[RMDB]
RNA sequence: GGGAACGACUCGAGUAGAGUCGAAAAAUCGAUCGCUGGGCCUCGUAACAAGAUACCUGUUCGAAGAACUGUCUGAAGCGCGCACGGACAGGGAGAACCUGUAUCCGCCCGAGGCCUGUGCUGAAGCGCGCACGGCAACCGAAAGGUGCGACACGAAGAUGUCUUUUCUGUUCGCAGAAAAGACAUCAAAAGAAACAACAACAACAAC
Reactivity to 2A3 in 0.01 (KOAc 150mM, MgCl2 10mM, bicine 150mM(pH8.5), 24C), signal-to-noise 1, nucleotides 027 to 156: a010u030c000g030a010u020c010g000c010u020g020g000g010c030c010u000c010g070u150a190a160c100a150a050g000a020u010a000c000c000u010g020u000u030c030g080a140a030g020a020a040c000u010g010u020c020u050g030a180a020g020c000g010c000g000c010a020c020g000g020a000c000a000g020g000g010a060g000a000a000c000c000u010g000u000a000u010c020c030g030c010c010c000g000a000g000g020c010c000u000g010u000g000c000u030g030a160a020g000c000g010c010g000c020a020c010g000g010c010a010a000c000c000g050a110a050a070g000g000u010g000c020g000a000c000a020c160g020a030a050